[RMDB]
RNA sequence: GGGAACGACUCGAGUAGAGUCGAAAAAGAGCCGGAUACGUCCGGCUCUACGGGGGAUACGUGUGGUGCCGUCCGCUCCCCCUAUGGCAUAACAAAUGCACCACACACUAGGCUACGGCCUAGUGAAAAAAGGUGUAUGUGUUCGCACAUACACCAAGUAAGAAACUGAGUUCGCUCAGUUUCUUACAAAAGAAACAACAACAACAAC
Reactivity to 2A3 in 0.01 (KOAc 150mM, MgCl2 10mM, bicine 150mM(pH8.5), 24C), signal-to-noise 2, nucleotides 027 to 156: a000g000a000g010c000c000g000g010a020u030a040c150g050u000c010c010g000g000c000u000c000u000a010c000g000g000g000g030g020a020u010a110c020g020u000g000u010g030g000u010g000c000c010g000u030c020c070g070c080u050c000c000c000c000c000u020a150u180g100g040c080a130u120a180a090c070a100a050a040u110g000c000a000c000c000a000c010a010c000a000c000u000a000g000g010c010u020a020c270g060g000c000c010u000a000g000u020g010a060a000a010a010a010a030g000g000u000g000u000a000u000g000u000g030u030u070c200g030c090a000c010a010u000a000c000a000c000c000a000a000